[RMDB]
About this RNA
Structure probing data (2A3) for a 207-nucleotide construct. 2A3 adducts were read by reverse transcription with SuperScript II with manganese.

RNA sequence: GGGAACGACUCGAGUAGAGUCGAAAAGAAAGAAAGAAAGAAAGGUAUGAAGUCCUAUUCACACGUGAUAGGAUAAACUUCAUAUUGAUCGUGUAUGUGCUAACGCACAUACACGAAUGCGCAUGCAGAACUGCAUGCAUGAACAUAGCGUGUGCAAGCAGGAAAAUCAUUUCGAUGAUUUUCCUGCAAAAGAAACAACAACAACAAC
Reactivity to 2A3 in 0.01 (KOAc 150mM, MgCl2 10mM, bicine 150mM(pH8.5), 24C), signal-to-noise 2, nucleotides 027 to 156: g090a000a070a000g110a010a100a010g090a090a010a010g090a070a050a010g010g000u020a000u000g000a000a000g020u000c000c010u000a000u010u060c050a020c000a000c070g000u020g000a000u000a000g000g010a010u090a030a120a000c000u000u000c000a000u000a030u060u100g030a050u010c000g000u020g010u000a000u000g060u020g010c040u120a170a010c160g000c020a000c000a000u010a000c000a000c030g000a000a030u010g020c030g000c000a000u010g010c000a000g060a300a090c180u000g000c000a000u000g000c030a020u120g060a030a000c060a090u100a070g000c000g000u010g020u020g030c100a150a020